[RMDB]
The record gives the reactivity of an RNA of 177 nucleotides to 2A3 and DMS. For 2A3 the reverse transcriptase was SuperScript II with manganese. The reactions ran in a buffer of 150 mM KOAc, 10 mM MgCl2 and 150 mM bicine (pH 8.5), at 24 C. High DMS reactivity at an A or C suggests that its Watson-Crick edge is free. For DMS, 1,216 sequencing reads were counted. The 2A3 profile rests on 2,032 reads.
RNA sequence: GGGAACGACUCGAGUAGAGUCGAAAACUGCCAAUCUAUCAGGAAAGAUUGAGCUGCUCGCUUAUAAUCUGCAACUCACCAAUCACUGCAGCAACUGUCACCCCAAUGGUGUAAACAUUAGUAACACGAGUGAUUACCGAUUCGUCGGUAAUCACUCAAAAGAAACAACAACAACAAC
Reactivity to 2A3 in 0.01 (KOAc 150mM, MgCl2 10mM, bicine 150mM(pH8.5), 24C), signal-to-noise 2, nucleotides 027 to 126: c020u020g000c020c000a010a030u050c000u080a080u190c040a060g090g130a200a170a010g040a060u000u030g010a010g040c020u050g000c020u060c060g020c020u150u100a060u030a190a080u080c020u030g000c000a030a010c010u030c050a050c030c000a020a040u040c040a040c100u050g000c000a000g020c000a050a040c050u070g000u090c020a070c020c010c010c000a030a060u090g000g010u020g010u030a070a090a020c040a050u080u130a060g050u090a040a080c050a000c120
Reactivity to DMS in 0.01 (KOAc 150mM, MgCl2 10mM, bicine 150mM(pH8.5), 24C), signal-to-noise 2, nucleotides 027 to 126: c030u000g020c030c070a050a060u000c030u010a120u020c110a150g020g000a090a050a070g000a040u010u000g020a130g020c020u010g000c060u000c110g000c020u000u010a050u000a080a090u000c050u010g030c070a030a040c060u010c050a020c040c060a060a060u000c070a050c050u010g000c040a070g020c060a090a060c070u000g000u000c060a130c030c030c020c040a040a030u010g010g010u040g000u000a050a130a080c030a030u010u000a120g030u010a130a070c160a030c100